[RMDB]
RNA sequence: GGGAACGACUCGAGUAGAGUCGAAAACAAAAUGCUCCAUAGACCUAGAAGCUGAAAUGGAAAGUUAGAAUCAUUCAAACACAAAUUUUGAUUUUAUUCCUUUGAGAGAUGGUAGGUGAUUGGCAUGAAAUAGCAGGAUAAAUAUUGUCUACCAAAAUCAUCGGGAUCAUUUCGAUGAUCCCGAUGAAAAAGAAACAACAACAACAAC
Reactivity to 2A3 in 0.01 (KOAc 150mM, MgCl2 10mM, bicine 150mM(pH8.5), 24C), signal-to-noise 1, nucleotides 027 to 156: c030a020a100a000a010u070g030c030u070c070c010a060u070a060g050a050c050c000u040a040g010a180a010g000c020u050g060a080a020a020u040g020g000a080a060a060g060u060u040a000g130a060a000u030c010a030u170u140c140a120a190a020c070a050c030a080a030a110u150u150u030u040g020a050u020u000u020u100a030u020u070c030c000u130u050u050g060a080g000a000g000a010u120g050g030u020a030g060g000u050g030a090u000u100g030g040c070a040u140g090a040a130a030u110a060g020c000a040g030g120a080u040a160a100a000u120a100u000u120g010u000c030u050a040c000c000a080a000a000a080